Background
Chemical mapping of a 177-nucleotide RNA with DMS. For DMS, 3,705 sequencing reads were counted. The reactions ran in a buffer of 150 mM KOAc, 10 mM MgCl2 and 150 mM bicine (pH 8.5), at 24 C.
[RMDB]
RNA sequence: GGGAACGACUCGAGUAGAGUCGAAAAAUAGAAUAAUGUAGAUAAGGGAAGUCGGCAAAAUAGAUCCGUAACUUAGGGAAAAGGAUUGGCUCAUAGGGCAGGGUUUGUUGGGCCUUUGAUGGAUCUUAUAGAACAAGAUCUUCGGAUCUUGUUCUAUAAAAGAAACAACAACAACAAC
Reactivity to DMS in 0.01 (KOAc 150mM, MgCl2 10mM, bicine 150mM(pH8.5), 24C), signal-to-noise 3, nucleotides 027 to 126: a100u060a030g010a080a070u030a090a100u020g000u000a080g010a080u010a090a120g000g000g000a080a100g000u010c040g020g030c150a040a050a080a130u000a100g000a020u020c030c000g000u020a090a060c080u010u000a080g000g020g000a080a050a090a100g010g000a060u010u010g000g030c020u000c010a040u010a090g000g000g010c120a070g010g010g020u000u010u020g000u000u000g000g000g010c020c040u000u020u000g000a070u010g000g010a080u010c020u000u030